[RMDB]
RNA sequence: GGGAACGACUCGAGUAGAGUCGAAAAGAUAUGGACCGUGUAGGGAGAUUAUAUUCGGAAACGAAUAUGAAUCGAAGAACUACCGGUCCUAAGUCAAAACCCAGACACAGUUCGCUGUGUCUGGGAAGUCAUUGGUAAAGUUCGCUUUACCAAUGACAAAAGAAACAACAACAACAAC
Reactivity to 2A3 in 0.01 (KOAc 150mM, MgCl2 10mM, bicine 150mM(pH8.5), 24C), signal-to-noise 2, nucleotides 027 to 126: g000a010u010a000u060g000g000a010c010c000g030u070g000u270a030g000g050g030a040g000a000u000u030a000u020a010u010u000c010g000g000a000a000a000c010g000a000a000u010a010u040g210a020a040u020c020g150a300a010g000a010a000c000u000a000c000c000g000g000u000c000c000u000a010a010g000u000c010a000a000a030a100c000c000c020a000g000a000c000a000c000a000g070u270u280c300g060c250u000g020u010g000u000c000u000g000g000g000a000a020
Reactivity to DMS in 0.01 (KOAc 150mM, MgCl2 10mM, bicine 150mM(pH8.5), 24C), signal-to-noise 2, nucleotides 027 to 126: g010a010u000a020u010g010g000a000c010c000g020u010g000u000a000g000g000g000a010g000a000u000u000a030u000a010u000u010c020g010g030a010a010a010c010g020a000a000u000a000u000g000a010a020u000c000g010a130a210g000a200a260c010u000a010c010c000g010g000u000c000c000u000a000a040g000u010c010a140a060a160a220c000c000c000a000g020a030c000a010c000a010g000u000u020c300g020c000u000g020u000g000u000c000u000g000g020g000a000a010

Conditions: 150 mM KOAc, 10 mM MgCl2 and 150 mM bicine (pH 8.5), 24 C.
This 177-nucleotide RNA was probed chemically with 2A3 and DMS.
For 2A3 the reverse transcriptase was SuperScript II with manganese.
For DMS, 3,362 sequencing reads were counted.